[RMDB]
Source: RMDB library OK1LIB, as collected in RNAgym. This 177-nucleotide RNA was probed chemically with 2A3. For 2A3, 549 sequencing reads were counted.

RNA sequence: GGGAACGACUCGAGUAGAGUCGAAAAGUCAGGAAACUACAUCUAUCCUGCAGUUGGAUCAGAUGAAAAGAUUCUUCCAACGGACAAUCUUGGAAAGGUGGUUUAUCCUAUCACAAGACCAGAUGGAGGCACGUGAGUGAUUCGUCACUCACGUGCCAAAAGAAACAACAACAACAAC
Reactivity to 2A3 in 0.01 (KOAc 150mM, MgCl2 10mM, bicine 150mM(pH8.5), 24C), signal-to-noise 1, nucleotides 027 to 126: g070u090c000a000g000g030a000a020a000c180u130a030c010a000u000c000u070a040u000c000c000u000g010c000a020g000u040u010g040g000a060u200c150a160g000a110u080g120a200a050a020a020g270a090u100u050c040u000u020c000c000a000a040c030g040g020a000c000a000a090u000c020u000u020g000g030a170a000a000g080g020u090g230g000u130u150u160a020u050c000c000u010a050u050c030a030c000a220a000g030a000c000c050a000g000a000u020g000g030a030
High 2A3 reactivity points to a flexible backbone, as in loops and unpaired stretches.